[RMDB]
This 177-nucleotide RNA was probed chemically with 2A3 and DMS. The 2A3 profile rests on 15,854 reads. For 2A3 the reverse transcriptase was SuperScript II with manganese. The reactions ran in a buffer of 150 mM KOAc, 10 mM MgCl2 and 150 mM bicine (pH 8.5), at 24 C. For DMS, 9,122 sequencing reads were counted. For DMS the reverse transcriptase was MarathonRT. Source: RMDB library OK2TRN, as collected in RNAgym.
RNA sequence: GGGAACGACUCGAGUAGAGUCGAAAAGCCACUUACGGACACUCCGUCUGACGUACAGUCACACUCGCAUGACUAGUCAAAGUCAUGACUGUGUGCGAGUACGACUGAUGGUCAGUUCGAGUGUGGAUACGUAAUGGAUGUUCGCAUCCAUUACGUAAAAAGAAACAACAACAACAAC
Reactivity to 2A3 in 0.01 (KOAc 150mM, MgCl2 10mM, bicine 150mM(pH8.5), 24C), signal-to-noise 8, nucleotides 027 to 126: g050c000c010a070c090u150u200a060c070g160g030a000c010a010c010u040c040c070g070u010c010u000g000a010c010g070u200a020c020a010g010u010c000a030c000a010c040u000c010g020c010a030u070g140a280c070u200a030g010u000c010a050a120a040g300u160c060a150u090g010a000c010u000g010u000g010u000g010c000g000a010g000u010a010c050g000a000c000u000g010a030u080g010g000u000c010a010g000u030u050c020g010a020g000u020g000u010g020g030a070
Reactivity to DMS in 0.01 (KOAc 150mM, MgCl2 10mM, bicine 150mM(pH8.5), 24C), signal-to-noise 6, nucleotides 027 to 126: g010c010c010a110c190u010u010a110c110g000g000a090c090a090c030u000c010c080g020u010c000u000g000a030c000g040u010a020c000a030g000u010c000a240c070a010c010u000c010g000c010a020u000g010a040c010u010a030g020u000c070a030a110a150g020u010c250a090u000g000a020c010u000g010u000g010u000g000c010g000a030g020u000a090c070g010a040c000u010g020a010u010g020g000u000c020a030g000u000u010c160g000a060g000u000g010u000g000g000a170